[RMDB]
RNA sequence: GGGAACGACUCGAGUAGAGUCGAAAAGCAUUCCACUUCGGUGGAAUGCAAAUGCCGCCUGCAAGAAAAGUGCUUCAAAGAGUGGGAGCACUGCCGAAGAAAAAAGUUCCAUGUUCGCAUGGAACAACUUCUAAUAAUUCUUCGGAAUUAUUAGAAGAAAAGAAACAACAACAACAAC
Reactivity to 2A3 in 0.01 (KOAc 150mM, MgCl2 10mM, bicine 150mM(pH8.5), 24C), signal-to-noise 4, nucleotides 027 to 126: g000c000a010u000u010c000c000a010c000u040u040c160g080g010u000g010g000a010a010u000g000c000a010a010a020u060g010c010c040g060c010c020u070g040c060a080a040g050a100a190a000a010g010u010g010c000u000u020c030a090a160a100g120a130g080u170g020g000g020a000g000c000a000c000u000g000c000c030g120a120a090g100a090a150a020a010a000a010g010u010u000c000c000a000u010g040u030u060c230g010c070a000u010g000g000a000a000c000a000a000
Reactivity to DMS in 0.01 (KOAc 150mM, MgCl2 10mM, bicine 150mM(pH8.5), 24C), signal-to-noise 3, nucleotides 027 to 126: g010c010a010u000u000c000c000a010c000u000u010c150g010g030u010g010g020a010a000u000g000c000a010a030a060u010g010c080c080g020c050c030u000g010c100a100a170g000a060a110a130a040g010u000g010c000u000u000c000a090a100a140g010a150g020u010g010g010g000a010g010c010a010c010u000g010c250c100g010a100a060g020a010a050a050a070a090a120g000u000u000c010c000a010u000g000u000u000c160g030c000a000u000g000g000a010a000c010a040a090
Structure probing data (2A3 and DMS) for a 177-nucleotide construct. The 2A3 profile rests on 8,410 reads. For DMS the reverse transcriptase was MarathonRT. The data come from the RNA Mapping Database (RMDB), library M2PK50. High 2A3 reactivity points to a flexible backbone, as in loops and unpaired stretches. 2A3 adducts were read by reverse transcription with SuperScript II with manganese. The RNA was probed in 150 mM KOAc, 10 mM MgCl2 and 150 mM bicine (pH 8.5) at 24 C.